Chemical mapping of a 177-nucleotide RNA with DMS.
RNA sequence: GGGAACGACUCGAGUAGAGUCGAAAAGCCUACCAAAGUGCUAGGAUUACAGGCAUGAGCCUCUGUGCCUGGCUAAUUUUAAAAUUUUUUAUAGAGAUAGGCUCUCGGUAUGUUGCCCAGGCUGGUCAAUGGACUAUGAAUUCGUUCAUAGUCCAUUAAAAGAAACAACAACAACAAC
Reactivity to DMS in 0.01 (KOAc 150mM, MgCl2 10mM, bicine 150mM(pH8.5), 24C), signal-to-noise 2, nucleotides 027 to 126: g010c010c000u000a070c070c060a060a130a150g020u000g010c040u000a020g010g000a060u010u000a020c010a030g010g020c000a140u010g010a150g000c030c020u000c070u000g000u000g000c000c000u000g000g000c040u000a030a020u000u010u020u020a010a060a100a060u020u010u020u000u000u030a170u030a300g000a240g000a060u000a040g010g010c020u000c040u000c090g010g000u000a060u000g010u000u000g000c040c020c050a060g020g010c040u010g000g020u010c130
Values are in units of 0.01, from 0 to 300, in steps of 10. DMS adducts were read by reverse transcription with MarathonRT. It was measured as part of the RMDB library OK2TRN.